RNA sequence: GGGAACGACUCGAGUAGAGUCGAAAAAAUGAGAGCUACCCAAAAGUGAAGAAUUGAAUUACUUUGGGCCAGCUCUCUCUCCACUCGGAGAAACGACGAGCGACAACAGAAGGUGCGAAUGGGAAUGCUUGUCAUCAUAGUUCGCUAUGAUGACAAGAAAAGAAACAACAACAACAAC
Reactivity to DMS in 0.01 (KOAc 150mM, MgCl2 10mM, bicine 150mM(pH8.5), 24C), signal-to-noise 2, nucleotides 027 to 126: a050a070u030g000a040g000a020g000c000u000a140c010c000c010a010a000a030a060g010u000g000a030a090g000a220a200u010u000g010a160a130u000u000a020c010u000u000u000g010g010g000c080c140a010g020c000u000c010u000c000u000c050u000c000c030a050c110u000c050g000g000a090g000a040a050a050c070g010a090c030g010a020g010c040g020a050c040a040a060c050a110g010a080a060g000g020u000g000c020g000a060a030u010g010g000g010a070a070u010g000
Reactivity to 2A3 in 0.01 (KOAc 150mM, MgCl2 10mM, bicine 150mM(pH8.5), 24C), signal-to-noise 2, nucleotides 027 to 126: a010a010u140g000a000g000a000g000c000u000a000c000c010c000a020a110a020a060g050u050g050a030a030g040a280a280u270u170g050a080a080u170u000a000c010u030u010u000g040g000g010c120c060a010g000c000u000c000u010c000u010c000u000c020c000a030c030u040c020g050g010a070g080a090a140a030c030g050a000c020g000a010g000c020g030a020c030a050a000c000a020g080a090a040g120g030u100g020c050g040a090a070u130g020g010g010a090a020u080g030